[RMDB]
About this RNA: Chemical mapping of a 177-nucleotide RNA with 2A3 and DMS. Reactivities are given for positions 27 through 126. DMS adducts were read by reverse transcription with MarathonRT. Source: RMDB library OK1LIB, as collected in RNAgym. The 2A3 profile rests on 1,341 reads.
RNA sequence: GGGAACGACUCGAGUAGAGUCGAAAAGAAAGAAAAGAAACUACCGAUGAAGACCUGUAUUCUACGCCUGUACCACGGGUCGGUUUUCAUACAGGCGAAGCACGAUGAAAGACAUCGUGCAAAGAAACCUAUCGAGCACUUUCGAGUGCUCGAUAGGAAAAGAAACAACAACAACAAC
Reactivity to 2A3 in 0.01 (KOAc 150mM, MgCl2 10mM, bicine 150mM(pH8.5), 24C), signal-to-noise 2, nucleotides 027 to 126: g080a010a020a000g070a010a080a000a040g050a000a110a030c040u100a100c050c010g090a120u280g130a060a010g030a060c000c050u100g020u060a160u120u090c040u050a010c000g060c010c000u010g040u110a120c010c080a070c050g000g000g000u000c000g000g010u000u010u100u090c050a060u040a040c040a020g030g010c000g000a030a000g000c000a000c000g010a020u030g140a060a230a000g160a050c000a010u000c030g000u000g000c000a000a000a000g000a060a000a000
Reactivity to DMS in 0.01 (KOAc 150mM, MgCl2 10mM, bicine 150mM(pH8.5), 24C), signal-to-noise 1, nucleotides 027 to 126: g000a040a150a010g000a160a060a030a070g000a080a030a060c040u000a070c110c040g000a010u040g020a070a130g010a150c000c100u040g000u000a090u000u020c130u030a050c060g000c000c000u000g030u000a210c120c060a050c080g000g000g000u040c050g010g000u000u000u050u070c220a150u030a030c040a050g000g000c000g000a120a300g040c000a020c000g060a020u000g000a090a180a130g000a130c000a000u110c000g020u000g010c000a000a020a060g010a060a110a070